[RMDB]
RNA sequence: GGGAACGACUCGAGUAGAGUCGAAAACACAUUUGAUGAAGAAGAUCUGGAAGAGGUGGAAACUUUCACGUAUCUGUGUAGCAUCACCCAUGAACGUGGAAGAUCUGACGCAGACGUAAAGACGAGGGCACGCUCGUGGAUUCGUCCACGAGCGUGCAAAAGAAACAACAACAACAAC
Reactivity to 2A3 in 0.01 (KOAc 150mM, MgCl2 10mM, bicine 150mM(pH8.5), 24C), signal-to-noise 1, nucleotides 027 to 126: c000a000c000a120u100u140u180g300a300u150g000a000a140g110a070a010g000a090u040c050u150g000g080a020a020g190a070g020g030u240g010g020a180a180a020c000u030u050u120c010a000c030g000u000a260u090c010u000g080u000g000u000a000g110c070a050u040c000a140c000c030c000a000u120g020a020a000c020g010u010g000g000a000a000g000a040u000c000u000g000a020c000g090c070a000g000a000c000g000u000a000a170a000g170a020c090g010a120g000g070

About this RNA: Conditions: 150 mM KOAc, 10 mM MgCl2 and 150 mM bicine (pH 8.5), 24 C. The record gives the reactivity of an RNA of 177 nucleotides to 2A3. High 2A3 reactivity points to a flexible backbone, as in loops and unpaired stretches. 2A3 adducts were read by reverse transcription with SuperScript II with manganese. Reactivities are rounded to 0.1 and cut off at 0 and 3.